[RMDB]
RNA sequence: GGGAACGACUCGAGUAGAGUCGAAAACGUGUAAUGUCUUCUCGGUUGUUAGUGGUGGAUACGGCUGUCAAAGGAUGCGGGUGUGACGGGGGUAUUUAUGGACAGGAGCUCCUUGCGAGGUGGUACGCCAUGCUGGAAGUUUCGACUUCCAGCAUGGAAAAGAAACAACAACAACAAC
Reactivity to DMS in 0.01 (KOAc 150mM, MgCl2 10mM, bicine 150mM(pH8.5), 24C), signal-to-noise 1, nucleotides 027 to 126: c140g010u010g030u000a020a040u010g000u000c040u010u000c050u000c000g010g040u010u020g020u020u000a150g000u000g000g000u010g000g000a070u010a100c100g000g030c050u010g000u010c180a030a140a120g040g000a110u010g000c050g010g000g000u000g000u020g000a060c100g020g010g000g000g000u030a010u000u030u020a020u050g010g000a060c040a050g020g020a120g000c080u000c040c030u020u010g010c040g040a050g000g010u000g000g030u000a050c100g000